[RMDB]
RNA sequence: GGGAACGACUCGAGUAGAGUCGAAAAGAGUAUGCCGAUCAUCAACGUACCGGCCUGUCAGCCAUUUUUCGUGGCACAUCACUGCGCACCACACUGGUACUCGGCGGAGCCUUAAUGAUCAACUGGACGGUGCACCUAAUUUCGAUUAGGUGCACCGAAAAGAAACAACAACAACAAC
Reactivity to DMS in 0.01 (KOAc 150mM, MgCl2 10mM, bicine 150mM(pH8.5), 24C), signal-to-noise 1, nucleotides 027 to 126: g000a090g000u000a100u010g070c050c170g000a120u000c010a090u060c050a140a030c210g020u010a030c150c070g020g020c010c040u010g010u000c130a120g050c000c060a060u000u000u000u000u000c080g050u000g000g020c000a240c120a100u000c060a090c100u030g000c150g020c000a120c020c050a060c240a060c070u010g030g000u000a030c080u000c110g000g000c000g010g000a150g000c060c050u000u010a180a140u010g000a060u010c040a080a050c010u000g000g000a300
Reactivity to 2A3 in 0.01 (KOAc 150mM, MgCl2 10mM, bicine 150mM(pH8.5), 24C), signal-to-noise 1, nucleotides 027 to 126: g070a020g050u130a070u150g000c040c050g000a010u040c010a000u030c030a060a110c070g030u000a080c040c030g070g000c030c010u030g030u020c010a030g000c030c020a020u150u040u000u080u110c080g000u040g020g030c010a000c010a040u050c030a030c100u100g000c100g000c020a050c010c020a020c000a000c050u010g000g050u040a050c040u010c030g010g060c000g000g000a000g030c000c010u040u110a110a040u100g080a110u050c050a010a100c020u040g030g000a040

The data come from the RNA Mapping Database (RMDB), library OK2TST. The record gives the reactivity of an RNA of 177 nucleotides to DMS and 2A3. The RNA was probed in 150 mM KOAc, 10 mM MgCl2 and 150 mM bicine (pH 8.5) at 24 C. The DMS profile rests on 725 reads.